[RMDB]
RNA sequence: GGGAACGACUCGAGUAGAGUCGAAAAUCGCCGAUAUCCUGGGCAAUGACGCCAUCCCGCGGACGAGUUCGGAGGAUGACAGUUACAGUUACGGGCAUAGGGUCAGGAACUUUGAGUUUCUCCUUGAGCAUUACAUCAUGCCGUGGUAUACUCGUGAUAUCCAGAUAUUGUUCGCAAUAUCUGGAUAAAAAGAAACAACAACAACAAC
Reactivity to DMS in 0.01 (KOAc 150mM, MgCl2 10mM, bicine 150mM(pH8.5), 24C), signal-to-noise 3, nucleotides 027 to 156: u000c030g020c030c020g000a170u000a070u000c020c000u000g030g020g000c040a110a170u000g000a060c030g010c010c000a070u010c040c010c030g040c030g030g020a100c080g020a130g020u000u000c040g030g000a100g000g020a090u000g010a040c040a110g010u000u000a060c050a140g020u000u000a090c040g010g010g020c020a160u010a100g020g010g000u000c050a090g000g010a040a080c040u000u000u010g010a220g010u000u000u000c010u000c010c040u000u010g020a120g040c020a040u000u000a060c090a050u000c070a060u000g000c040c000g050u000g020g020u000a060u000a030c030u010c020g020u000g020a240
Reactivity to 2A3 in 0.01 (KOAc 150mM, MgCl2 10mM, bicine 150mM(pH8.5), 24C), signal-to-noise 4, nucleotides 027 to 156: u090c010g020c020c010g020a040u040a050u140c010c020u060g000g050g000c080a040a090u150g030a050c130g030c060c010a080u160c010c010c000g090c040g000g020a030c030g050a060g060u090u100c060g020g050a030g050g020a030u050g020a020c020a070g030u050u060a030c020a050g010u050u070a030c080g020g010g030c030a020u090a060g030g000g030u090c080a000g010g040a020a050c010u100u110u220g090a100g020u030u050u010c060u020c010c050u100u210g050a050g020c000a020u080u130a060c040a100u140c020a020u100g000c020c010g030u030g000g010u060a060u010a080c020u020c030g030u020g040a020

This 207-nucleotide RNA was probed chemically with DMS and 2A3. The data come from the RNA Mapping Database (RMDB), library OK3TST. Reactivities are given for positions 27 through 156. The 2A3 profile rests on 2,737 reads.